[RMDB]
RNA sequence: GGGAACGACUCGAGUAGAGUCGAAAAGAAACGUACGGACAGCCUGGAUGGGAAAGCAUGCAAUACUAGGAUGGGAAAGCAUGCUCGGUGACUUCGGCUGUAUGGUACACGGGCAUGCGAAAGGAUGGUCCAUCCGAAACGUACGGGCACUGCAUGCCAUCAUUGACGAAUUCGUUCGUCAAUGAUGAAAAGAAACAACAACAACAAC
Reactivity to 2A3 in 0.01 (KOAc 150mM, MgCl2 10mM, bicine 150mM(pH8.5), 24C), signal-to-noise 4, nucleotides 027 to 156: g050a020a060a000c030g010u050a000c070g040g120a050c050a030g040c030c020u130g040g070a080u090g030g020g060a030a050a010g000c010a010u030g000c020a030a100u050a150c040u050a030g010g010a010u020g020g000g040a070a060a000g000c000a000u000g000c000u000c000g060g030u070g060a070c000u050u040c040g140g010c070u100g020u070a050u110g020g010u060a050c080a010c020g000g000g030c000a000u010g020c000g040a080a030a020g140g020a050u130g050g020u020c000c000a000u000c000c000g000a010a050a020c030g010u030a020c000g010g010g000c090a030c050u050g010c010a000u010g010c000
Reactivity to DMS in 0.01 (KOAc 150mM, MgCl2 10mM, bicine 150mM(pH8.5), 24C), signal-to-noise 3, nucleotides 027 to 156: g010a070a090a090c050g050u000a080c080g030g030a100c050a080g020c020c020u010g000g030a150u000g020g000g000a080a120a100g030c010a010u010g000c000a070a100u000a070c030u000a100g010g000a050u000g010g010g010a110a080a230g020c000a020u000g030c030u000c020g020g050u010g010a060c040u000u000c050g040g000c020u000g030u020a050u000g010g010u000a080c070a020c020g020g000g000c000a030u000g040c000g010a070a080a090g000g010a100u000g030g030u020c030c000a060u000c000c010g010a030a000a080c080g030u000a060c060g020g020g010c030a100c040u000g010c000a170u000g000c010
This 207-nucleotide RNA was probed chemically with 2A3 and DMS. The 2A3 profile rests on 3,903 reads. Conditions: 150 mM KOAc, 10 mM MgCl2 and 150 mM bicine (pH 8.5), 24 C. For DMS the reverse transcriptase was MarathonRT. For 2A3 the reverse transcriptase was SuperScript II with manganese.